[RMDB]
Structure probing data (DMS and 2A3) for a 207-nucleotide construct. Values cover nucleotides 27 to 156. Conditions: 150 mM KOAc, 10 mM MgCl2 and 150 mM bicine (pH 8.5), 24 C. 2A3 adducts were read by reverse transcription with SuperScript II with manganese. Source: RMDB library OK3TST, as collected in RNAgym.
RNA sequence: GGGAACGACUCGAGUAGAGUCGAAAAACGAUUGUGUCAUCUGCAAACAGGGACAAUUUGACUUCCUCUUUUCCUAAUUGAAUACCCUUUAUUUCCUUCUCUUGCCUGAUUGCCCGGGCCAGAACUUCCAACACUAUGUUGAAUAGGAAUGGUGAGACUGGUAAUCAGGUUUCGACCUGAUUACCAGAAAAGAAACAACAACAACAAC
Reactivity to DMS in 0.01 (KOAc 150mM, MgCl2 10mM, bicine 150mM(pH8.5), 24C), signal-to-noise 1, nucleotides 027 to 156: a110c110g020a090u020u030g020u010g060u000c040a050u040c030u070g020c040a090a140a140c080a060g000g050g010a110c030a040a070u020u000u000g020a100c040u000u010c030c030u000c050u010u010u030u000c010c010u000a050a180u010u010g040a130a110u000a100c020c020c000u000u000u000a100u040u000u000c010c020u020u000c050u020c030u010u010g010c000c000u000g000a050u000u010g010c030c000c000g060g010g000c050c080a050g010a130a170c020u010u000c010c020a030a030c020a110c160u010a060u020g040u020u010g010a080a040u030a020g030g010a070a150u000g050g020u010g020a180g000a190
Reactivity to 2A3 in 0.01 (KOAc 150mM, MgCl2 10mM, bicine 150mM(pH8.5), 24C), signal-to-noise 1, nucleotides 027 to 156: a000c060g030a040u020u090g040u010g020u040c030a130u030c060u120g050c100a140a080a150c150a110g010g010g040a020c030a040a040u120u050u130g070a050c040u020u060c020c010u080c020u060u060u120u010c020c000u090a070a150u030u130g030a070a020u130a120c010c010c000u080u130u070a090u020u100u080c020c000u080u000c050u000c000u050u060g000c000c020u060g050a140u060u070g040c000c000c050g020g020g000c000c000a010g010a030a020c000u110u020c040c050a040a040c030a060c100u160a030u250g040u050u050g080a060a030u050a050g020g030a050a030u040g000g030u060g000a000g010a060